[RMDB]
RNA sequence: GGGAACGACUCGAGUAGAGUCGAAAAAGGGUGGUCGGCACACUCCCAAGUUGAAAGGGGGUGGUGCUGUUUGACGGUAUUUGAAGCGUUGAUGUUUGCCGUAGCGUUUGCGACUUUAAUCAUCGCGGUCCCUAAAAUGCUUCGGCAUUUUAGGGACAAAAGAAACAACAACAACAAC
Reactivity to 2A3 in 0.01 (KOAc 150mM, MgCl2 10mM, bicine 150mM(pH8.5), 24C), signal-to-noise 2, nucleotides 027 to 126: a040g060g010g030u040g030g010u070c010g010g010c000a000c000a000c000u020c000c000c000a070a030g130u110u110g250a110a080a080g000g020g000g000g000u040g020g020u010g000c000u010g040u020u030u090g040a010c020g010g000u060a110u010u120u110g110a100a010g020c010g030u040u060g020a030u030g050u030u140u070g050c030c030g020u060a040g050c010g080u060u110u080g000c000g000a040c010u030u030u140a050a010u060c040a000u030c010g000c000g030
Reactivity to DMS in 0.01 (KOAc 150mM, MgCl2 10mM, bicine 150mM(pH8.5), 24C), signal-to-noise 2, nucleotides 027 to 126: a100g000g010g020u000g000g030u020c010g000g000c060a080c010a010c030u000c030c000c000a070a140g010u010u040g010a080a090a140g030g030g010g000g030u000g020g000u000g030c020u040g000u020u020u000g000a080c050g000g000u020a110u030u010u040g030a070a100g000c040g000u050u000g000a070u010g000u000u000u000g000c040c030g000u000a060g000c100g000u000u000u000g010c000g010a070c010u020u020u050a090a020u000c100a040u000c020g030c070g010